[RMDB]
RNA sequence: GGGAACGACUCGAGUAGAGUCGAAAAUGUCCAGUCCCUCCCCGCUCCUGGAGAAGGGAGACUCGGGAACGCCUAGCAUCUGAGGGACGAAGCCGCCCCCGGGCGCUCCCCUCGGAGAUCCACUGGGAAACUCCUACCUUCGGGUAGGAGAAAAGAAACAACAACAACAAC
Reactivity to DMS in 0.01 (KOAc 150mM, MgCl2 10mM, bicine 150mM(pH8.5), 24C), signal-to-noise 7, nucleotides 027 to 129: u040g040u020c020c020a060g020u000c000c030c020u000c000c010c000c020g060c080u020c020c040u030g020g020a190g010a150a100g000g000g000a050g010a140c050u000c050g000g000g000a050a040c100g040c010c010u010a000g000c190a160u030c020u040g020a060g020g040g020a140c100g000a050a180g020c010c030g000c040c010c020c060c130g050g020g040c040g000c040u020c040c000c010c010u000c000g000g000a030g020a060u020c070c040a090c070u000g000g000g000a080a070a140
Reactivity to 2A3 in 0.01 (KOAc 150mM, MgCl2 10mM, bicine 150mM(pH8.5), 24C), signal-to-noise 6, nucleotides 027 to 129: u080g020u010c010c000a000g040u010c000c000c000u000c000c000c000c000g010c010u020c000c020u070g070g100a160g040a110a110g060g020g010a030g000a000c030u020c040g020g020g030a070a040c030g000c010c010u020a020g040c030a070u000c020u040g030a020g020g010g010a030c060g010a050a010g050c080c030g020c020c020c000c000c020g040g010g000c030g000c000u000c000c000c010c010u000c000g020g010a020g010a030u060c020c020a060c090u060g000g000g000a030a060a060